[RMDB]
RNA sequence: GGGAACGACUCGAGUAGAGUCGAAAAUGACACUCACAGAAGCCUUUGCAGCCUCGCAAGAGGUCUGGCGCGACAGUAAAGAAUGCCUGAUGCAAGUCAGUUCGCUGGCAACACUUUCGAAUUGCGGGGACGUCCUGAGAGCUCGGUUCUACCAACCCCCCUUAUUUUUGUUCGCAAAAAUAAGGGGAAAAGAAACAACAACAACAAC
Reactivity to 2A3 in 0.01 (KOAc 150mM, MgCl2 10mM, bicine 150mM(pH8.5), 24C), signal-to-noise 3, nucleotides 027 to 156: u110g000a020c020a000c120u070c020a080c020a080g110a170a030g010c030c020u110u110u170g020c020a010g010c010c010u000c010g020c060a050a030g010a040g050g010u060c030u010g020g000c010g020c010g050a070c030a070g030u180a050a060a030g060a120a030u130g030c000c000u060g030a060u080g040c040a070a050g020u060c010a020g000u060u080c060g010c060u030g050g000c020a060a050c040a030c090u060u180u100c060g050a130a100u120u040g010c000g000g000g030g010a020c000g030u020c000c010u080g030a070g000a020g070c020u020c060g000g050u050u010c030u030a080c010c040a010a030c000c020